[RMDB]
RNA sequence: GGGAACGACUCGAGUAGAGUCGAAAAGCUAGCCAGCGCACGAUGAGACUGCCGUGACGUCUAGCCUGCGUCUCAACUAGUCUCCAUCAAUCAAAACGCUGGGAUUGAUGUACGAGACUAUUACACAGUGUAUGCACGUGUUCGCAUGUGUAUACACAAAAGAAACAACAACAACAAC
Reactivity to 2A3 in 0.01 (KOAc 150mM, MgCl2 10mM, bicine 150mM(pH8.5), 24C), signal-to-noise 9, nucleotides 027 to 126: g020c010u020a000g010c010c030a020g010c020g010c030a010c020g050a060u150g030a040g080a110c090u120g070c060c010g030u040g050a160c020g030u070c020u020a010g010c000c010u040g030c030g060u010c000u000c020a030a090c070u040a000g000u000c000u000c000c000a000u000c000a000a000u000c010a010a050a080a120c130g050c140u140g080g000g000a000u000u000g000a000u000g010u060a060c070g000a000g000a000c010u010a030u020u130a050c100a010c020a020
Reactivity to DMS in 0.01 (KOAc 150mM, MgCl2 10mM, bicine 150mM(pH8.5), 24C), signal-to-noise 9, nucleotides 027 to 126: g010c020u000a070g000c080c030a060g010c040g010c040a030c040g010a100u020g010a120g000a080c080u010g020c050c040g000u000g000a080c040g010u020c020u000a080g000c030c020u010g000c060g000u000c000u000c020a110a090c210u010a010g000u000c000u000c000c010a010u000c000a010a000u010c010a060a060a080a140c130g010c080u020g010g010g000a010u000u000g000a010u000g000u030a070c140g010a010g010a010c010u000a020u010u010a090c190a100c200a120